[RMDB]
RNA sequence: GGGAACGACUCGAGUAGAGUCGAAAAACAAAACAGGCAGGGAGUUAAAUUCUUGCCGAAUUCGCGGUCAAGUCUUGGGAGGAUCAGAUCUUAGGCGCGCUCGUCGCAGCCCCGGCAACGGUUACAGUACUCACUAAAGAUUCGUCUUUAGUGAGUAAAAAGAAACAACAACAACAAC
Reactivity to DMS in 0.01 (KOAc 150mM, MgCl2 10mM, bicine 150mM(pH8.5), 24C), signal-to-noise 9, nucleotides 027 to 126: a090c070a100a050a090a090c160a140g000g010c010a010g000g000g010a010g000u010u060a090a110a140u000u000c000u000u000g020c010c000g000a070a070u030u020c080g010c050g000g000u000c050a050a080g010u000c030u000u000g000g000g010a080g000g000a070u010c080a060g000a070u010c030u000u010a080g000g010c030g020c060g000c050u010c070g010u010c030g010c050a100g000c030c010c010c040g000g000c070a060a060c070g000g010u010u010a060c150a120g010
Reactivity to 2A3 in 0.01 (KOAc 150mM, MgCl2 10mM, bicine 150mM(pH8.5), 24C), signal-to-noise 9, nucleotides 027 to 126: a000c040a000a090a000a010c040a020g000g000c000a000g000g010g030a030g020u100u160a050a130a190u050u010c000u000u010g000c000c000g000a000a060u080u060c040g000c030g060g010u030c020a040a030g020u010c030u060u070g060g040g010a060g030g030a060u040c030a030g020a040u010c030u070u110a050g030g010c010g000c010g020c060u050c050g110u050c010g000c040a050g020c000c000c000c020g020g000c020a050a020c020g040g010u070u060a030c010a030g040